[RMDB]
Structure probing data (2A3 and DMS) for a 207-nucleotide construct.
The reactions ran in a buffer of 150 mM KOAc, 10 mM MgCl2 and 150 mM bicine (pH 8.5), at 24 C.
Values are in units of 0.01, from 0 to 300, in steps of 10.
Values cover nucleotides 27 to 156.

RNA sequence: GGGAACGACUCGAGUAGAGUCGAAAAGGCAUGUAGUGUAACAGUCGGCGAGGGAUACCAAGCUACAUGAACGGCGGGACCACGGUCUGAUCCCAGCCCUCAUCUGUCAGACCAGGACGUAGCCAUGGCGGGAGCAUACGACAUGUGACCCAGCCGGCUUAUCUCUUCCAUUCGUGGAAGAGAUAAGAAAAGAAACAACAACAACAAC
Reactivity to 2A3 in 0.01 (KOAc 150mM, MgCl2 10mM, bicine 150mM(pH8.5), 24C), signal-to-noise 5, nucleotides 027 to 156: g070g000c010a010u020g000u020a040g030u030g070u180a120a160c110a100g110u100c070g020g050c030g010a070g010g030g030a040u100a160c010c020a080a010g000c040u050a020c000a020u090g030a120a020c010g040g000c020g020g000g010a080c240c000a040c050g000g030u010c020u030g020a030u030c010c020c020a020g010c000c020c000u050c020a140u040c020u090g020u030c030a020g040a110c050c020a020g100g030a030c060g020u080a020g000c050c030a100u130g030g020c020g000g030g000a030g000c030a050u050a110c030g000a050c090a060u140g050u060g050a100c000c000c030a000g000c000c010g000g000
Reactivity to DMS in 0.01 (KOAc 150mM, MgCl2 10mM, bicine 150mM(pH8.5), 24C), signal-to-noise 2, nucleotides 027 to 156: g000g030c040a010u000g010u000a060g010u020g040u000a110a100c040a170g020u000c090g040g020c020g000a090g030g010g000a210u000a040c050c040a050a300g030c050u000a020c010a070u000g010a070a110c070g030g000c030g000g030g010a060c020c020a050c060g040g030u010c060u010g000a020u000c060c020c010a100g000c010c010c040u000c030a080u000c050u000g010u000c060a160g010a030c040c040a180g040g000a070c050g020u010a070g100c030c030a070u000g040g020c030g030g020g000a260g000c010a060u000a070c070g000a050c040a180u010g010u000g000a200c010c000c010a080g000c000c000g030g020